[RMDB]
RNA sequence: GGGAACGACUCGAGUAGAGUCGAAAACAUGAUUCGUCAUGACCAAAGCGUACUACUUUCUCUUUUGACGCGAACAUAUGAUAAUAUCCCAAAUAGGAUAUUGUUUGUAUGAAUUCGCGAUAAGAGAAAGUAUCGCCCUGUGUGGAUUCGUCCACAAGUCUUUGUGGAGGUUCGCCUCCACAAAGACAAAAGAAACAACAACAACAAC
Reactivity to 2A3 in 0.01 (KOAc 150mM, MgCl2 10mM, bicine 150mM(pH8.5), 24C), signal-to-noise 3, nucleotides 027 to 156: c030a020u000g020a040u010u110c200g090u030c090a010u020g070a050c030c020a100a090a040g000c010g060u100a090c020u010a010c000u100u020u010c010u010c000u030u030u060u200g180a090c050g000c000g000a000a000c020a000u020a000u030g030a000u000a030a000u000a000u000c010c020c060a150a210a180u300a120g000g000a000u000a020u040u010g060u020u030u150g010u000a010u020g080a300a300u020u000c000g000c000g000a000u020a010a000g010a000g000a000a000a000g000u000a000u060c000g020c000c030c020u170g050u020g000u000g050g020a030u030u100c140g040u030c050c000a000c010a010a040
The data come from the RNA Mapping Database (RMDB), library RNAMAK. An RNA of 207 nucleotides, treated with 2A3 and read out base by base. Reactivities are given for positions 27 through 156. Conditions: 150 mM KOAc, 10 mM MgCl2 and 150 mM bicine (pH 8.5), 24 C. For 2A3, 2,079 sequencing reads were counted.